Chemical mapping of a 207-nucleotide RNA with 2A3 and DMS. For DMS, 2,834 sequencing reads were counted. For 2A3, 3,474 sequencing reads were counted. For DMS the reverse transcriptase was MarathonRT. It was measured as part of the RMDB library RNAMAK.
[RMDB]
RNA sequence: GGGAACGACUCGAGUAGAGUCGAAAACGCUGGGCUUCUCUAGCGUGUCUCGCUUGGAUUUAUGGGUGUAAGCUACUGAAGCGCGCACGGUAGUUGAGCCCAUUGUCAGCGAGAUCGGGAGCCUGUGCUGAAGCGCGCACGGCAACCGAAAGGUGCGGAGAAUGGAAAUGUUCGCAUUUCCAUUCUCAAAAGAAACAACAACAACAAC
Reactivity to 2A3 in 0.01 (KOAc 150mM, MgCl2 10mM, bicine 150mM(pH8.5), 24C), signal-to-noise 4, nucleotides 027 to 156: c060g000c010u040g000g020g000c030u130u050c100u040c080u150a110g090c060g150u170g020u040c000u010c000g000c030u100u250g240g020a180u290u300u160a040u150g020g010g030u100g060u190a040a010g040c000u000a000c000u040g070a180a030g030c030g010c000g000c050a030c010g010g000u000a000g010u010u030g050a040g040c000c000c000a010u010u030g010u010c000a010g000c000g000a000g000a010u000c030g010g000g000a010g000c000c030u050g050u100g020c020u110g040a120a020g010c040g000c020g000c020a000c020g060g000c030a100a080c000c010g010a070a020a020g060g000u040g020c030g090
Reactivity to DMS in 0.01 (KOAc 150mM, MgCl2 10mM, bicine 150mM(pH8.5), 24C), signal-to-noise 2, nucleotides 027 to 156: c050g030c000u000g000g070g030c080u000u010c050u100c030u000a130g050c040g020u000g030u010c000u000c010g000c030u010u010g070g020a130u000u020u000a060u000g010g050g000u000g040u000a210a300g020c010u000a020c010u000g020a020a050g020c030g000c050g030c020a270c010g000g000u000a030g000u000u020g000a300g010c000c000c000a000u000u000g000u000c030a080g000c030g000a030g020a070u000c010g040g000g010a230g000c030c000u010g010u000g000c000u000g050a150a000g020c060g000c040g030c010a180c110g030g000c000a070a100c000c000g010a050a110a140g040g020u000g000c040g000